Overview:
An RNA of 170 nucleotides, treated with DMS and 2A3 and read out base by base. Values are in units of 0.01, from 0 to 300, in steps of 10. For 2A3 the reverse transcriptase was SuperScript II with manganese.
RNA sequence: GGGAACGACUCGAGUAGAGUCGAAAAUCGGACCGCGGGGAGGUGGAGAUGCCAUGCCGACCCGAAGAGGAAAGAAGGACUCGGACGCGAACCCGUAAGGUGAAACUUUCACAUUUAUUGGGGAGUAUAACCUAGAACUUCGGUUCUAGGAAAAGAAACAACAACAACAAC
Reactivity to DMS in 0.01 (KOAc 150mM, MgCl2 10mM, bicine 150mM(pH8.5), 24C), signal-to-noise 9, nucleotides 027 to 129: u050c030g000g000a100c040c040g000c090g000g000g000g000a110g020g000u030g000g000a120g020a060u020g010c060c090a090u020g040c080c030g050a100c050c000c070g010a060a040g030a080g000g030a010a020a010g000a010a010g020g000a100c060u030c090g010g030a030c120g030c070g020a110a150c030c010c020g030u030a000a010g030g000u000g030a030a140a130c200u040u060u020c030a050c020a050u040u020u030a040u050u080g000g010g020g010a130g000u050a070u010a080a090
Reactivity to 2A3 in 0.01 (KOAc 150mM, MgCl2 10mM, bicine 150mM(pH8.5), 24C), signal-to-noise 9, nucleotides 027 to 129: u080c010g020g010a010c010c020g030c040g020g010g000g000a030g010g010u060g020g010a110g010a030u140g070c050c010a060u120g020c010c010g040a050c000c000c010g020a030a020g020a020g020g010a030a010a030g020a010a010g010g000a010c010u000c050g030g010a020c040g020c010g040a050a040c010c000c000g020u040a010a010g020g000u020g020a060a060a060c030u090u120u040c040a060c030a180u050u070u080a080u090u300g000g010g010g000a020g030u090a070u030a130a030
The DMS profile rests on 44,490 reads.